[RMDB]
RNA sequence: GGGAACGACUCGAGUAGAGUCGAAAACGGGGGCGACAUGGCGGUGCGUGGGGAGGUCAGGAAAAGCGGGGCCGAGCCUGGCGAUCAGAUCGGCCACACUAACGGCGCCGGUGGCAUGACAGCCGACCCUGGAGGAAAGAUUCGUCUUUCCUCCAGGAAAAGAAACAACAACAACAAC
Reactivity to 2A3 in 0.01 (KOAc 150mM, MgCl2 10mM, bicine 150mM(pH8.5), 24C), signal-to-noise 1, nucleotides 027 to 126: c020g040g000g000g020g040c040g020a020c030a040u090g080g020c040g000g070u090g020c030g030u100g020g030g000g030a090g000g020u080c070a010g020g070a030a110a030a030g050c010g000g040g030g020c000c000g020a010g060c030c010u030g060g040c060g030a110u300c020a020g030a060u040c010g000g000c040c000a010c000a000c010u080a110a030c030g040g080c030g020c060c010g010g040u020g010g000c020a030u050g020a070c020a040g010c030c010g040a060c030
Reactivity to DMS in 0.01 (KOAc 150mM, MgCl2 10mM, bicine 150mM(pH8.5), 24C), signal-to-noise 2, nucleotides 027 to 126: c090g010g000g000g030g010c080g000a090c070a120u010g000g000c070g010g000u010g010c110g020u000g000g000g020g000a090g000g010u010c060a070g010g010a050a060a100a110g010c050g010g010g000g010c010c010g010a050g010c130c010u000g000g000c220g010a070u000c090a010g000a190u000c010g000g000c000c000a050c030a000c030u010a090a080c070g010g000c060g000c040c020g030g000u010g010g020c040a050u010g000a070c100a150g020c030c010g000a040c190